Chemical mapping of a 177-nucleotide RNA with 2A3 and DMS. For 2A3 the reverse transcriptase was SuperScript II with manganese. The data come from the RNA Mapping Database (RMDB), library OK2TRN.
[RMDB]
RNA sequence: GGGAACGACUCGAGUAGAGUCGAAAAGGUCGACGACGGGGUUCGUCGCCACACCGAGCUCACCGAGCAGGUGGCUGAGCUGUCGCAGCAACUACUUGCUCACCAGCUGCGGCUCGAAGCUGCGCGAGUUCACCUGCUGUUUCGACAGCAGGUGAACAAAAGAAACAACAACAACAAC
Reactivity to 2A3 in 0.01 (KOAc 150mM, MgCl2 10mM, bicine 150mM(pH8.5), 24C), signal-to-noise 2, nucleotides 027 to 126: g040g020u230c040g010a010c010g000a000c140g150g090g300g000u150u020c010g010u000c000g000c020c000a020c010a000c010c020g000a040g020c000u040c010a140c070c120g050a010g000c000a020g050g080u010g050g000c030u030g040a050g040c020u070g040u170c040g020c120a020g010c020a070a070c050u170a040c000u080u120g030c020u020c030a040c000c020a020g040c020u030g020c020g000g020c000u010c040g020a030a000g010c030u050g000c060g000c030g060a080
Reactivity to DMS in 0.01 (KOAc 150mM, MgCl2 10mM, bicine 150mM(pH8.5), 24C), signal-to-noise 2, nucleotides 027 to 126: g000g020u020c030g020a030c000g020a020c010g060g030g040g090u020u000c000g010u010c000g000c010c000a140c190a120c020c020g020a070g020c010u000c050a090c120c150g000a050g020c000a050g010g030u000g000g010c080u010g000a100g010c000u000g000u000c100g020c030a020g010c010a120a060c140u000a070c080u000u020g000c010u010c060a180c150c080a080g030c030u000g000c060g000g010c080u000c060g000a100a050g000c000u000g000c060g020c120g000a150

Source information
Values cover nucleotides 27 to 126.